[RMDB]
RNA sequence: GGGAACGACUCGAGUAGAGUCGAAAACCGAUGGGGUACUGAUUGUGAUGACGAUAGUAAGUCAGCAGGUGGAAACACUUUGUGCGUGGGUUAGGUAGCCUCAUAUACAUGAACGACUGAUGUAGAGUCCGACAUAACAUUUCGAUGUUAUGUCGGAAAAAGAAACAACAACAACAAC
Reactivity to 2A3 in 0.01 (KOAc 150mM, MgCl2 10mM, bicine 150mM(pH8.5), 24C), signal-to-noise 5, nucleotides 027 to 126: c000c000g000a070u010g000g000g000g020u040a030c010u010g060a080u160u060g050u080g130a170u070g020a000c010g020a010u030a130g120u100a260a030g010u020c000a020g000c010a020g000g010u020g020g020a040a030a000c020a010c020u060u160u160g070u070g020c090g030u090g010g020g040u050u040a060g000g060u030a040g100c010c000u020c010a010u020a000u010a050c050a050u120g090a100a010c050g090a010c130u130g080a070u070g060u120a050g020a030g170
Reactivity to DMS in 0.01 (KOAc 150mM, MgCl2 10mM, bicine 150mM(pH8.5), 24C), signal-to-noise 4, nucleotides 027 to 126: c030c000g040a090u000g000g000g000g030u000a030c000u000g000a110u000u020g020u020g010a130u000g000a020c040g000a130u020a120g020u010a120a130g000u000c020a150g020c040a030g000g010u000g010g020a140a110a140c040a010c050u020u030u020g010u010g000c120g020u010g000g010g000u020u000a100g010g020u010a050g020c010c000u010c030a020u010a120u000a050c080a020u000g010a100a070c120g000a090c090u000g000a040u000g020u010a050g000a100g000
Chemical mapping of a 177-nucleotide RNA with 2A3 and DMS. As a SHAPE reagent, 2A3 marks flexible, mostly unpaired nucleotides at the ribose 2'-OH. The RNA was probed in 150 mM KOAc, 10 mM MgCl2 and 150 mM bicine (pH 8.5) at 24 C.